This 177-nucleotide RNA was probed chemically with 2A3 and DMS. High 2A3 reactivity points to a flexible backbone, as in loops and unpaired stretches. Source: RMDB library OK1LIB, as collected in RNAgym. DMS adducts were read by reverse transcription with MarathonRT. The DMS profile rests on 48,502 reads. Conditions: 150 mM KOAc, 10 mM MgCl2 and 150 mM bicine (pH 8.5), 24 C.
[RMDB]
RNA sequence: GGGAACGACUCGAGUAGAGUCGAAAAGAGCGUCGAGAGACGAAGAGAAGUGCAUGGAUCCACAACGGAGAACGUAAUAAUGCACGCAUGUGGGUUAGUGUCCGGAACAACGGGCACAAGAGGCAGAGAUCGUAUAUAUCUUCGGAUAUAUACGAUCAAAAGAAACAACAACAACAAC
Reactivity to 2A3 in 0.01 (KOAc 150mM, MgCl2 10mM, bicine 150mM(pH8.5), 24C), signal-to-noise 9, nucleotides 027 to 126: g050a010g030c020g010u000c020g010a020g010a000g010a090c040g030a100a000g070a000g030a220a020g020u030g020c020a030u050g060g060a060u020c020c010a050c050a150a090c130g050g020a100g060a170a020c050g030u060a050a050u090a120a020u120g030c030a010c040g020c030a050u090g020u060g040g040g010u040u090a050g000u020g000u000c000c000g010g050a090a060c110a080a050c070g000g000g000c000a000c000a000a010g040a010g050g000c080a020g010a000
Reactivity to DMS in 0.01 (KOAc 150mM, MgCl2 10mM, bicine 150mM(pH8.5), 24C), signal-to-noise 9, nucleotides 027 to 126: g000a080g010c020g000u000c010g010a220g000a210g010a020c020g000a090a070g010a090g010a090a120g010u000g000c020a030u010g010g010a100u010c000c010a070c110a070a130c090g010g000a110g010a080a090c120g010u010a070a090u040a130a060u020g010c030a030c020g010c140a060u020g020u000g000g000g000u000u010a090g010u000g010u000c000c000g010g000a110a090c290a130a160c010g000g000g000c000a000c000a040a040g010a090g000g000c060a060g000a200